[RMDB]
RNA sequence: GGGAACGACUCGAGUAGAGUCGAAAAGGAGAGAUGCGCCACUUGGCUGAACAUGGAAGUAAAAAUUAUUGAUGCAGUUAUUGGUAUCAAAGCACCCUACUUCUGUGGGGGAUUUAUCCUGGUGGACCAGGAGGAUAGAUUUCGAUCUAUCCUCCUGAAAAGAAACAACAACAACAAC
Reactivity to 2A3 in 0.01 (KOAc 150mM, MgCl2 10mM, bicine 150mM(pH8.5), 24C), signal-to-noise 6, nucleotides 027 to 126: g100g020a090g000a010g010a070u090g050c060g030c060c000a020c040u040u060g030g000c020u030g020a020a010c010a020u040g020g020a030a000g020u060a020a080a040a110a090u210u160a100u080u070g010a000u020g000c010a010g110u160u160a200u260u270g100g000u030a010u020c000a010a020a010g040c030a110c010c000c010u020a010c000u030u030c020u040g010u010g000g020g000g020g010a000u050u080u040a050u050c000c010u030g030g010u020g030g000a020c020
Reactivity to DMS in 0.01 (KOAc 150mM, MgCl2 10mM, bicine 150mM(pH8.5), 24C), signal-to-noise 7, nucleotides 027 to 126: g010g010a080g010a110g010a080u000g020c130g000c030c020a060c060u000u000g010g010c060u000g010a060a110c020a020u000g010g000a020a020g010u000a010a060a060a090a090u010u010a110u000u000g010a010u000g010c010a060g000u010u020a110u010u030g020g010u000a010u000c020a020a030a120g020c210a120c070c060c050u000a010c010u000u000c050u000g020u000g010g000g010g010g010a100u010u000u000a050u010c010c010u000g000g020u000g000g010a090c120